[RMDB]
RNA sequence: GGGAACGACUCGAGUAGAGUCGAAAAGUGGUGCGCGGAGAGGGUAACCACCGGCGCGCGUCACUGAUAUAUCCACCGGGGGGUAAGGGGAGAAAAGGAUACAGCGCGACGAAGUUAGCAAGCUGCCGAAAUGUACCCACAUUCGUGUGGGUACAAAUUCGCUUAUCUAAUUCGUUAGAUAAGCGAAAAAAGAAACAACAACAACAAC
Reactivity to DMS in 0.01 (KOAc 150mM, MgCl2 10mM, bicine 150mM(pH8.5), 24C), signal-to-noise 1, nucleotides 027 to 156: g030u000g030g010u010g020c060g060c010g000g000a090g010a150g000g020g010u010a080a140c110c070a060c030c020g010g000c000g040c040g010c000g010u010c010a090c030u010g020a080u010a060u000a090u010c040c030a140c050c040g010g010g030g030g030g030u010a030a030g000g030g000g010a090g000a120a050a070a170g020g010a160u000a040c040a060g010c010g000c010g010a180c040g000a040a120g020u000u000a060g020c080a100a130g040c010u000g000c000c020g010a050a110a140u030g010u030a030c000c020c000a000c000a040u010u040c250g030u000g080u010g010g000g030u010a000c010a040a040a040